[RMDB]
RNA sequence: GGGAACGACUCGAGUAGAGUCGAAAAAAAAAGUGUCAGGUUGCAGAAGCACAUUCACUACGGUACUAGCCGAUCUGUAAUGGAUUCCUAUUUUUGUUUGUCCCCAGACAUCCUUAAUGUGAAUGUGGUAAGUUUUCCUAUUCGUAGGAAAACUUACAAAAGAAACAACAACAACAAC
Reactivity to DMS in 0.01 (KOAc 150mM, MgCl2 10mM, bicine 150mM(pH8.5), 24C), signal-to-noise 3, nucleotides 027 to 126: a000a040a040a060a060g010u000g010u010c060a080g010g010u010u000g020c030a040g000a100a070g020c030a030c030a010u000u010c010a020c010u000a120c190g000g010u000a090c190u020a070g010c050c040g010a100u000c010u000g010u000a030a060u010g010g020a100u010u000c160c020u000a050u010u000u010u000u000g030u010u000u020g000u010c010c000c020c060a120g010a050c070a030u000c060c040u000u010a050a070u010g000u010g000a030a040u000g010u000g010
Reactivity to 2A3 in 0.01 (KOAc 150mM, MgCl2 10mM, bicine 150mM(pH8.5), 24C), signal-to-noise 1, nucleotides 027 to 126: a000a010a000a000a000g060u040g020u030c040a040g210g040u060u020g020c010a020g010a120a040g150c020a000c000a050u040u000c020a000c010u130a040c080g060g000u080a110c060u050a130g030c020c000g000a080u040c020u010g000u030a010a030u090g000g070a040u030u120c000c020u030a120u020u040u000u050u060g150u050u130u140g060u020c020c000c000c000a000g020a040c000a050u040c020c030u120u040a140a000u150g000u020g010a000a000u020g020u010g100